Source information:
The record gives the reactivity of an RNA of 177 nucleotides to DMS and 2A3. DMS (dimethyl sulfate) methylates the pairing face of unpaired adenines and cytosines. The 2A3 profile rests on 1,349 reads. The DMS profile rests on 1,025 reads. Conditions: 150 mM KOAc, 10 mM MgCl2 and 150 mM bicine (pH 8.5), 24 C.
[RMDB]
RNA sequence: GGGAACGACUCGAGUAGAGUCGAAAAGAUCGCCUCCUGGGUCGACAUGCCGCGCUCUCGCGCCUCGACCAUCCGGGACACCAAGAACACCUCGUAGUCGGUGGAUAGGCCGAAGACCAGCGCGAUGGAUUUUCGUUGCAUUCGUGCAACGAAAAUCAAAAGAAACAACAACAACAAC
Reactivity to DMS in 0.01 (KOAc 150mM, MgCl2 10mM, bicine 150mM(pH8.5), 24C), signal-to-noise 1, nucleotides 027 to 126: g010a090u000c080g000c030c060u010c050c000u000g000g000g020u090c080g030a130c240a060u000g000c120c000g000c060g000c200u000c300u000c010g000c060g000c000c070u000c120g000a000c050c050a030u030c070c010g000g000g000a060c080a030c110c050a050a070g000a160a130c130a080c040c040u000c090g050u000a010g000u030c010g000g000u020g000g000a080u000a100g010g060c080c000g000a040a010g000a200c050c010a100g040c130g000c000g000a140u020g050
Reactivity to 2A3 in 0.01 (KOAc 150mM, MgCl2 10mM, bicine 150mM(pH8.5), 24C), signal-to-noise 2, nucleotides 027 to 126: g080a070u080c030g070c020c020u000c050c060u140g030g000g050u040c040g020a040c020a150u190g080c040c010g000c030g000c020u080c010u070c050g050c000g010c020c010u040c020g110a110c010c000a000u040c030c000g000g010g000a010c010a030c060c020a050a040g090a030a020c050a080c050c090u100c050g020u070a090g020u050c070g030g000u040g030g010a050u070a050g090g000c000c000g010a010a000g020a080c000c050a060g060c030g040c030g040a020u090g060